[RMDB]
RNA sequence: GGGAACGACUCGAGUAGAGUCGAAAAAGUUGGAGUGUUGGGUUCCCAUUCAACCCGACUACGACAGGCACUGGCACCUUACGGCCGGACAUCAGUGACGCCAACAAAUUGGGUUUCCGGUAUGGCAAUCGUAUAGGAGUUUCGACUCCUAUACGAUAAAAGAAACAACAACAACAAC
Reactivity to DMS in 0.01 (KOAc 150mM, MgCl2 10mM, bicine 150mM(pH8.5), 24C), signal-to-noise 6, nucleotides 027 to 126: a120g010u000u010g000g010a120g010u010g010u000u000g000g000g010u000u000c060c020c100a200u010u000c140a050a050c010c000c010g010a030c020u010a080c060g010a060c120a090g000g000c060a050c050u000g010g000c110a110c070c040u000u000a050c130g000g010c020c040g010g000a080c110a040u010c050a050g020u000g010a080c120g000c020c010a030a070c060a050a070a100u010u000g010g000g000u000u000u000c020c010g010g010u000a040u000g000g020c250a120
Reactivity to 2A3 in 0.01 (KOAc 150mM, MgCl2 10mM, bicine 150mM(pH8.5), 24C), signal-to-noise 3, nucleotides 027 to 126: a000g040u050u030g020g020a140g020u070g000u010u050g020g000g000u040u070c000c050c000a020u130u100c030a020a020c010c020c000g010a020c030u100a020c040g130a030c040a040g060g000c040a010c080u050g010g020c040a060c020c010u060u140a040c080g070g000c020c000g020g020a020c030a060u100c020a000g020u010g070a010c060g040c030c000a010a020c020a030a130a030u130u110g110g010g000u040u040u020c030c000g000g060u140a110u090g040g040c050a050
Structure probing data (DMS and 2A3) for a 177-nucleotide construct. For 2A3 the reverse transcriptase was SuperScript II with manganese. Conditions: 150 mM KOAc, 10 mM MgCl2 and 150 mM bicine (pH 8.5), 24 C. Source: RMDB library OK2TST, as collected in RNAgym.